[RMDB]
RNA sequence: GGGAACGACUCGAGUAGAGUCGAAAAAGCUCCAGUCUCAGCCAAUCACUUAGCUUCCCAUAACAAGUCUAACUGGCUCAGAAGAGCUAGCUGUGCCGCAAUAAAACCACAUGGAGGAGAUAUCCCACGAUAGUUUGGCCUUCGGGCCAAACUAUCGAAAAGAAACAACAACAACAAC
Reactivity to 2A3 in 0.01 (KOAc 150mM, MgCl2 10mM, bicine 150mM(pH8.5), 24C), signal-to-noise 1, nucleotides 027 to 126: a000g010c030u030c000c000a040g060u000c010u010c000a020g070c020c020a000a140u000c000a040c010u090u040a020g000c000u040u060c070c060c020a000u010a010a010c040a160a000g050u000c010u010a030a020c000u120g000g040c000u030c000a130g060a210a030g000a070g000c020u000a000g010c010u000g010u010g050c000c000g020c090a090a100u050a100a030a050a080c020c070a000c010a160u050g050g020a050g010g010a000g000a000u060a070u140c000c010c000a040

Chemical mapping of a 177-nucleotide RNA with 2A3. For 2A3 the reverse transcriptase was SuperScript II with manganese.